[RMDB]
RNA sequence: GGGAACGACUCGAGUAGAGUCGAAAAAGCAUGUAGUGCGUGGGUGGCUUGCACUAUAAUCUCAGACAUCAAAAGUUUAAUUGGCGAAAAUAACUACGCUCUCGCUGCGUAAUCGAAGAAUAGUAGAUUAGACGCUUCAUCGCCGCCAAAGUGGCAGGUAACUUAACGUGUUCGCACGUUAAGUUACAAAAGAAACAACAACAACAAC
Reactivity to DMS in 0.01 (KOAc 150mM, MgCl2 10mM, bicine 150mM(pH8.5), 24C), signal-to-noise 2, nucleotides 027 to 156: a090g020c100a080u000g070u000a010g010u000g000c050g050u020g010g050g070u000g000g000c040u030u000g000c000a080c010u000a080u000a030a070u000c080u000c030a180g000a040c060a150u010c050a170a120a080a140g030u000u000u000a050a080u000u000g010g000c020g030a100a110a070a130u000a050a100c010u000a060c000g100c030u000c090u000c110g000c070u020g040c060g020u000a030a100u000c030g000a120a200g000a080a080u000a150g040u000a150g000a120u000u000a040g010a060c050g010c070u020u000c050a100u000c030g050c130c000g000c030c020a080a080a210g010u000g010g000c020a080g010
Reactivity to 2A3 in 0.01 (KOAc 150mM, MgCl2 10mM, bicine 150mM(pH8.5), 24C), signal-to-noise 5, nucleotides 027 to 156: a000g120c100a070u150g020u210a010g010u010g010c020g000u040g010g020g030u020g010g010c000u020u040g020c000a010c010u070a090u010a230a050u040c030u010c020a020g030a060c020a060u040c000a080a050a030a040g040u090u100u120a110a100u130u080g030g000c030g030a030a020a040a100u120a050a040c050u060a030c060g000c050u020c030u030c070g050c060u060g010c000g030u030a020a030u040c030g000a010a000g050a090a050u080a100g040u010a000g000a020u020u020a090g030a050c010g000c000u060u040c050a080u050c030g010c020c010g000c010c020a080a060a020g080u120g030g000c040a020g080
Notes: The data come from the RNA Mapping Database (RMDB), library ARCHII. Chemical mapping of a 207-nucleotide RNA with DMS and 2A3. The 2A3 profile rests on 4,412 reads. The RNA was probed in 150 mM KOAc, 10 mM MgCl2 and 150 mM bicine (pH 8.5) at 24 C.